[RMDB]
RNA sequence: GGGAACGACUCGAGUAGAGUCGAAAACUGUUCUGGCUGUUGACCCGCAAAACGGCGCUGGGGAUGUUUAUCGAAGCCGUUGGUAUCAACAUUCGGGCGGCAAAAAAUGCCGGGGUAAACACGCGAAGCGUCCCGUUUUAUUCGUAAAACGGGACGCAAAAGAAACAACAACAACAAC
Reactivity to DMS in 0.01 (KOAc 150mM, MgCl2 10mM, bicine 150mM(pH8.5), 24C), signal-to-noise 3, nucleotides 027 to 126: c070u000g000u010u000c030u000g010g030c030u000g000u010u000g010a190c160c000c030g020c040a040a040a060a120c130g010g020c030g000c050u000g020g020g010g010a060u000g000u000u010u020a050u000c040g010a070a300g020c070c070g010u000u010g000g000u010a100u000c070a030a040c020a060u000u000c040g010g000g000c010g010g020c020a000a010a080a120a050a050u000g010c050c030g020g000g000g010u000a130a050a040c030a020c110g020c060g010a110a170
Reactivity to 2A3 in 0.01 (KOAc 150mM, MgCl2 10mM, bicine 150mM(pH8.5), 24C), signal-to-noise 1, nucleotides 027 to 126: c020u040g030u060u000c050u070g130g040c010u010g000u000u010g010a020c000c000c010g040c020a020a030a020a000c060g120g000c020g000c040u090g150g110g080g080a020u020g100u010u110u090a110u070c040g040a120a000g080c090c040g060u040u060g000g000u080a120u120c050a040a060c000a000u020u000c000g060g050g000c020g010g030c000a050a000a050a000a050a110u120g020c110c020g000g030g010g010u040a080a040a000c050a020c110g060c060g200a040a050